[RMDB]
RNA sequence: GGGAACGACUCGAGUAGAGUCGAAAAGAUAUGGACCCUAAGCGCGAGGAUCGUGAAGUAUAUCGGAAACGAUAUAUGGAGGCGGGAGCGUAUGGGUCCUAAGUCAAAACUACUGUUCGCAGUAGAACUUUCUUUUCAUGUUCGCAUGAAAAGAAAGAAAAGAAACAACAACAACAAC
Reactivity to 2A3 in 0.01 (KOAc 150mM, MgCl2 10mM, bicine 150mM(pH8.5), 24C), signal-to-noise 3, nucleotides 027 to 126: g020a020u070a020u150g020g000a000c000c040c020u080a300a170g040c000g010c000g060a260g100g020a060u040c020g020u080g100a030a030g030u000a000u000a000u020c000g020g010a040a030a050c000g000a010u010a010u000a010u030g000g030a080g280g260c030g010g020g000a010g010c010g000u050a080u130g000g000g000u000c000c000u010a010a000g000u000c020a000a000a060a180c010u020a010c000u000g010u030u160c300g030c160a000g000u040a010g010a040a030
Reactivity to DMS in 0.01 (KOAc 150mM, MgCl2 10mM, bicine 150mM(pH8.5), 24C), signal-to-noise 4, nucleotides 027 to 126: g000a050u010a300u000g000g020a020c000c000c000u000a060a270g010c010g030c020g010a060g000g010a040u000c000g000u000g010a300a160g000u000a010u000a000u000c000g010g000a120a080a170c000g010a000u010a000u000a000u000g010g000a210g000g000c020g000g000g000a020g020c000g030u010a260u000g010g010g000u000c000c010u000a000a070g000u010c030a080a070a070a110c000u000a010c000u000g010u000u010c220g020c010a030g000u010a000g010a060a200
Chemical mapping of a 177-nucleotide RNA with 2A3 and DMS. The reactions ran in a buffer of 150 mM KOAc, 10 mM MgCl2 and 150 mM bicine (pH 8.5), at 24 C. For 2A3 the reverse transcriptase was SuperScript II with manganese. For DMS the reverse transcriptase was MarathonRT.